[RMDB]
RNA sequence: GGGAACGACUCGAGUAGAGUCGAAAAUGCAAGCACAGCGAAGCCUUCAGCGACCCGCGCGGGUAGUAGAGCCCCGCAUGGAUCACCUCGCUGUUGCGCGAACUCAUGCCCGUGCCGAUCGCGUCGACCAUAGGCGAGGGUUCGCCCUCGCCUAUGGAAAAGAAACAACAACAACAAC
Reactivity to 2A3 in 0.01 (KOAc 150mM, MgCl2 10mM, bicine 150mM(pH8.5), 24C), signal-to-noise 1, nucleotides 027 to 126: u110g000c050a020a030g000c010a000c040a020g000c010g060a070a000g000c000c040u060u110c050a020g030c010g020a020c000c010c000g050c020g030c010g000g020g050u050a070g090u060a100g090a080g080c010c000c040c000g000c000a020u080g020g000a040u070c070a070c080c060u000c050g000c010u020g040u050u050g010c030g010c010g040a080a060c020u040c060a020u180g000c000c000c060g040u010g010c000c030g060a070u040c080g000c020g020u050c040g080a070
Reactivity to DMS in 0.01 (KOAc 150mM, MgCl2 10mM, bicine 150mM(pH8.5), 24C), signal-to-noise 2, nucleotides 027 to 126: u000g020c080a080a280g000c010a020c110a040g000c020g010a090a110g010c080c060u000u010c080a080g020c040g000a020c090c000c080g000c060g010c020g030g000g000u010a100g010u010a140g010a230g000c210c000c010c010g050c010a030u000g000g000a050u000c110a230c130c140u000c060g000c020u000g000u000u000g020c050g040c080g000a060a060c050u000c060a070u000g000c020c000c040g040u010g000c050c070g000a020u000c110g010c040g010u000c110g000a210